About this RNA:
The data come from the RNA Mapping Database (RMDB), library OK2TST. Chemical mapping of a 177-nucleotide RNA with 2A3 and DMS. For 2A3, 1,324 sequencing reads were counted. In probing experiments dimethyl sulfate is read out at A N1 and C N3, which are open when not base-paired.
[RMDB]
RNA sequence: GGGAACGACUCGAGUAGAGUCGAAAAUUGCGUGAGCGUGGGGCUAUCUUUAUUGAGCAGAUUAGCGAAGUACCGGACGGCGCGAUCCUGAUUUUCUCCGCACACGGUGUUUCUCAGGCGGUACGUAAGGGGAUGUACUAUUCGUAGUACAUCCCCUAAAAGAAACAACAACAACAAC
Reactivity to 2A3 in 0.01 (KOAc 150mM, MgCl2 10mM, bicine 150mM(pH8.5), 24C), signal-to-noise 1, nucleotides 027 to 126: u110u100g020c000g000u010g040a060g000c010g020u060g020g000g020g020c040u050a040u060c020u030u280u060a230u150u180g050a020g000c040a000g080a130u060u100a090g020c050g040a040a020g030u020a040c010c000g050g050a020c010g030g090c000g010c020g050a010u000c010c080u070g050a070u000u040u120u010c000u020c000c000g000c000a040c000a040c070g000g050u020g020u020u060u060c030u000c020a030g000g000c020g040g010u020a050c020g060u050a040
Reactivity to DMS in 0.01 (KOAc 150mM, MgCl2 10mM, bicine 150mM(pH8.5), 24C), signal-to-noise 3, nucleotides 027 to 126: u010u000g030c020g050u000g000a070g000c030g020u000g020g000g000g030c050u020a050u010c050u000u000u010a160u040u000g010a170g040c080a090g010a060u010u010a100g020c040g010a120a100g010u010a020c070c030g000g000a110c100g000g010c030g020c050g000a060u000c050c030u000g000a130u010u020u000u000c040u000c030c020g000c080a100c120a060c060g000g020u000g010u000u000u000c020u000c020a090g000g040c050g010g010u000a030c050g000u000a080